Source information
Conditions: 150 mM KOAc, 10 mM MgCl2 and 150 mM bicine (pH 8.5), 24 C. An RNA of 177 nucleotides, treated with DMS and 2A3 and read out base by base. The 2A3 profile rests on 1,698 reads. DMS adducts were read by reverse transcription with MarathonRT.
[RMDB]
RNA sequence: GGGAACGACUCGAGUAGAGUCGAAAAGAUAUGGAAGAAGAAUUCCGAAGAACUAACUGUUUGUCGGAAACGAUGAUAGUUAGGGAGGAACUUCUUCCUAAGUCAAAGCCGAUCUUCGGAUCGGCAACUGGUGUAUUGGGUUCGCCCAAUACACCAGAAAAGAAACAACAACAACAAC
Reactivity to DMS in 0.01 (KOAc 150mM, MgCl2 10mM, bicine 150mM(pH8.5), 24C), signal-to-noise 1, nucleotides 027 to 126: g010a000u000a300u000g020g000a000a000g030a010a010g000a130a300u000u000c000c000g120a080a130g050a160a200c000u000a000a010c010u000g000u000u000u020g080u010c000g000g010a150a040a140c000g050a000u000g000a000u000a010g000u000u000a010g000g000g010a100g000g000a020a030c010u000u000c010u000u000c000c000u000a030a040g010u000c020a060a100a110g010c010c000g000a010u000c000u000u020c180g020g000a000u000c000g000g000c000a010a030
Reactivity to 2A3 in 0.01 (KOAc 150mM, MgCl2 10mM, bicine 150mM(pH8.5), 24C), signal-to-noise 1, nucleotides 027 to 126: g010a000u080a030u100g000g000a000a000g010a010a030g070a190a300u120u010c020c030g140a100a050g040a070a060c000u000a020a000c010u000g100u240u180u260g080u070c010g000g100a070a040a050c000g000a010u010g030a040u030a030g000u020u000a000g060g050g000a040g000g000a020a010c000u030u000c020u000u010c000c000u020a070a010g020u000c040a040a040a030g000c030c000g000a000u000c020u060u060c220g090g020a020u000c000g000g030c000a000a000